[RMDB]
RNA sequence: GGGAACGACUCGAGUAGAGUCGAAAAGACUCAGAAUGUGUUCACCCUCUAUCCUUCUGCCAUCGAUGCUGGAUGGCUCCCAUACGAGGAGGGGGAGUCUGCAGCUUCUCCAGAACAAGGGUCCAAACACGUAUGCUGAUUUCGAUCAGCAUACGUGAAAAGAAACAACAACAACAAC
Reactivity to DMS in 0.01 (KOAc 150mM, MgCl2 10mM, bicine 150mM(pH8.5), 24C), signal-to-noise 3, nucleotides 027 to 126: g030a080c010u000c000a140g010a130a100u030g010u000g010u030u000c010a200c090c000c000u000c050u000a050u030c150c050u010u000c090u000g000c030c000a020u000c020g030a110u030g000c220u060g010g000a040u000g010g000c000u010c010c020c000a140u030a110c190g030a090g000g030a070g030g020g000g000g010a040g010u000c020u020g010c090a130g000c020u010u020c010u000c010c000a080g000a070a080c180a090a130g000g000g020u000c040c160a080a060a110
Reactivity to 2A3 in 0.01 (KOAc 150mM, MgCl2 10mM, bicine 150mM(pH8.5), 24C), signal-to-noise 6, nucleotides 027 to 126: g030a000c010u000c050a030g100a130a140u140g080u010g020u100u070c010a120c010c050c000u010c020u000a140u060c000c010u010u060c030u040g020c010c000a040u030c030g110a080u150g080c050u050g050g040a060u050g010g000c010u010c010c000c000a080u100a230c110g020a090g070g030a040g010g040g000g000g000a010g010u010c060u090g040c030a010g000c000u020u020c010u030c000c010a010g030a070a020c070a060a070g060g000g010u000c010c030a040a090a050